[RMDB]
RNA sequence: GGGAACGACUCGAGUAGAGUCGAAAAGAUACACCGAUAACCUCAAGACCUAGUUCUGCGACGCUACGGUAACUAUAAAUGGCAUUCUCGGCAGAAGAUAUGCUGAAGGAGUACGACAGGAGACGGAGUACCUCCCCCUAUUCGUAGGGGGAGGUACAAAAGAAACAACAACAACAAC
Reactivity to 2A3 in 0.01 (KOAc 150mM, MgCl2 10mM, bicine 150mM(pH8.5), 24C), signal-to-noise 2, nucleotides 027 to 126: g030a030u150a080c030a030c040c030g020a060u040a130a090c000c010u030c070a050a000g040a030c000c040u060a060g070u080u040c070u100g040c070g010a060c030g010c030u030a000c030g070g010u020a020a010c050u060a020u070a260a110a090u140g030g000c020a030u040u010c030u030c000g090g000c060a010g000a110a020g040a090u170a020u060g000c000u020g030a050a020g030g010a030g010u040a030c070g030a020c040a030g010g060a060g000a020c020g070g030a060
Reactivity to DMS in 0.01 (KOAc 150mM, MgCl2 10mM, bicine 150mM(pH8.5), 24C), signal-to-noise 2, nucleotides 027 to 126: g010a090u010a120c150a060c060c010g000a070u010a130a120c050c020u010c040a130a120g010a060c030c040u000a060g010u000u000c050u000g020c070g010a050c120g000c050u000a060c050g010g000u000a060a060c110u000a060u020a020a090a100u000g000g000c020a020u020u000c030u000c040g050g000c080a040g010a050a030g000a110u000a040u010g000c010u000g000a050a070g010g000a050g000u000a030c050g000a050c070a050g000g010a100g010a080c070g020g010a090